An RNA of 207 nucleotides, treated with 2A3 and read out base by base. The reactions ran in a buffer of 150 mM KOAc, 10 mM MgCl2 and 150 mM bicine (pH 8.5), at 24 C.
[RMDB]
RNA sequence: GGGAACGACUCGAGUAGAGUCGAAAACGUCAGAGGGCGCUACCAUGCAAACUAGGGCUGGCUACUCUUGCACAGAAUCACAUCUCGAUAAUUGUCAGUGCAAGAAGGACAAUUAUACCAUUUAAUGAAAACGUUUACCUGUUCGCAGGUAAACGAACGUGGAGGGUAUCUUCGGAUACCCUCCACGAAAAGAAACAACAACAACAAC
Reactivity to 2A3 in 0.01 (KOAc 150mM, MgCl2 10mM, bicine 150mM(pH8.5), 24C), signal-to-noise 2, nucleotides 027 to 156: c000g030u020c010a020g030a050g050g050g010c070g000c090u070a090c020c060a050u270g030c030a060a010a090c120u120a100g000g100g070c000u010g010g000c030u080a090c000u020c000u000u010g000c020a000c000a010g150a020a040u250c100a040c010a190u000c060u040c150g060a020u000a030a080u040u010g000u000c010a030g000u000g000c000a000a010g040a000a000g010g000a000c020a020a020u060u000a010u020a090c070c060a060u040u000u240a210a100u200g080a060a050a000a070c000g000u020u000u000a010c000c000u000g030u010u100c180g060c010a000g000g030u000a010a000a000c000g000a010a000